[RMDB]
RNA sequence: GGGAACGACUCGAGUAGAGUCGAAAAAAUCAUGGUGCGUCUACUCACUGUCAUGCUCCCAGUGUACUUUAGCUUCAGAUACAUUCGACGCGUCCAACAUCAAUCCAACCGCAUUACAUUACGAAUCCCUUUUCAUAUUUUUCGAAAUAUGAAAAGGAAAAGAAACAACAACAACAAC
Reactivity to 2A3 in 0.01 (KOAc 150mM, MgCl2 10mM, bicine 150mM(pH8.5), 24C), signal-to-noise 9, nucleotides 027 to 126: a000a000u230c120a090u110g050g000u070g030c030g060u010c020u030a050c010u030c040a060c040u040g040u080c030a060u100g020c010u030c010c000c000a010g020u050g030u090a100c040u080u100u100a040g030c020u060u060c030a010g020a120u050a070c040a100u030u070c030g030a020c020g010c020g040u040c010c000a040a040c010a090u070c030a040a070u010c020c020a020a070c020c020g050c020a020u070u120a060c020a060u080u070a050c080g060a040a060u080c000
Reactivity to DMS in 0.01 (KOAc 150mM, MgCl2 10mM, bicine 150mM(pH8.5), 24C), signal-to-noise 6, nucleotides 027 to 126: a070a050u030c130a040u030g030g030u020g010c040g020u020c020u010a080c050u010c060a080c040u010g010u000c040a070u020g000c060u000c010c010c030a140g020u010g020u020a050c090u020u000u020a090g010c020u000u000c060a070g010a120u020a080c100a060u010u010c050g020a050c060g000c040g000u000c020c040a060a100c100a100u010c080a050a080u010c020c020a050a110c040c030g010c060a050u020u010a070c070a040u010u010a050c090g010a060a080u020c090